[RMDB]
RNA sequence: GGGAACGACUCGAGUAGAGUCGAAAAUCGAUUAUGCGAGACUAAUGAGCAUAUGAUACUGUGGUACAGUAUCAGUUCAAUGACUGUAGGACAGUCAAAUAUGCGUCUUUGAACUCAUGUAUGGCGGGCAGACGUGUGUAUUCGUACACACGUCUGCAAAAGAAACAACAACAACAAC
Reactivity to DMS in 0.01 (KOAc 150mM, MgCl2 10mM, bicine 150mM(pH8.5), 24C), signal-to-noise 1, nucleotides 027 to 126: u010c060g030a210u020u010a030u010g030c030g000a060g000a250c060u030a030a000u000g030a300g000c030a040u000a000u000g000a100u000a010c000u000g000u010g020g020u010a300c000a000g000u020a030u000c010a060g090u000u010c140a090a190u040g000a030c000u000g000u000a030g040g010a300c030a000g000u000c080a060a000a080u000a000u000g000c010g020u020c020u000u000u000g000a120a050c010u020c000a060u000g010u000a050u000g040g000c070g000g020
Reactivity to 2A3 in 0.01 (KOAc 150mM, MgCl2 10mM, bicine 150mM(pH8.5), 24C), signal-to-noise 1, nucleotides 027 to 126: u090c000g000a010u050u000a060u120g000c060g000a010g040a140c030u050a030a030u150g000a010g000c020a010u010a080u090g030a000u030a030c000u030g010u090g130g240u220a030c000a010g000u000a040u030c000a010g050u040u220c060a050a060u050g000a000c020u040g040u070a050g110g110a030c000a010g000u020c040a050a000a000u060a010u010g000c050g170u050c040u040u000u040g060a080a060c010u010c000a010u160g040u010a070u030g120g060c100g030g070
Chemical mapping of a 177-nucleotide RNA with DMS and 2A3.
It was measured as part of the RMDB library OK2TRN.
2A3 adducts were read by reverse transcription with SuperScript II with manganese.